Structure probing data (2A3 and DMS) for a 177-nucleotide construct. For DMS the reverse transcriptase was MarathonRT. Values cover nucleotides 27 to 126. For 2A3 the reverse transcriptase was SuperScript II with manganese. The DMS profile rests on 1,075 reads.

RNA sequence: GGGAACGACUCGAGUAGAGUCGAAAAAAGAAAAUCACUAAUGCUGGAAAUACUCUAUCAAGACGAACAUAUAGUUGCGGUAAAUAAACCAGCCGGCUGGUUAGUUCACCGCAGUUGGCUGGAUAGCCACUGACGAUGCAUUCGUGCAUCGUCAGUGAAAAGAAACAACAACAACAAC
Reactivity to 2A3 in 0.01 (KOAc 150mM, MgCl2 10mM, bicine 150mM(pH8.5), 24C), signal-to-noise 2, nucleotides 027 to 126: a000a010g220a040a090a010a040u080c030a010c000u060a070a030u050g020c020u010g060g010a020a150a070u130a080c030u040c020u030a120u190c060a050a030g050a010c050g060a160a000c020a030u200a020u030a200g020u080u020g040c050g050g010u040a040a140a050u120a040a140a030c000c000a000g010c010c020g070g020c010u020g000g090u090u020a040g060u140u180c070a050c060c080g000c070a000g010u020u020g010g000c000u000g020g040a050u120a020g000c020
Reactivity to DMS in 0.01 (KOAc 150mM, MgCl2 10mM, bicine 150mM(pH8.5), 24C), signal-to-noise 2, nucleotides 027 to 126: a080a060g010a050a050a060a060u000c070a080c080u010a090a120u010g010c020u000g000g010a130a030a070u000a090c230u000c040u000a080u000c100a060a080g000a090c020g020a060a110c100a030u020a070u030a100g000u000u010g000c160g000g000u000a060a050a040u010a020a050a130c010c000a000g000c030c040g030g020c030u000g000g010u000u000a170g000u010u020c070a010c060c030g030c010a020g010u000u020g010g020c060u000g020g000a100u000a040g030c120

The 2A3 profile rests on 1,105 reads. The RNA was probed in 150 mM KOAc, 10 mM MgCl2 and 150 mM bicine (pH 8.5) at 24 C.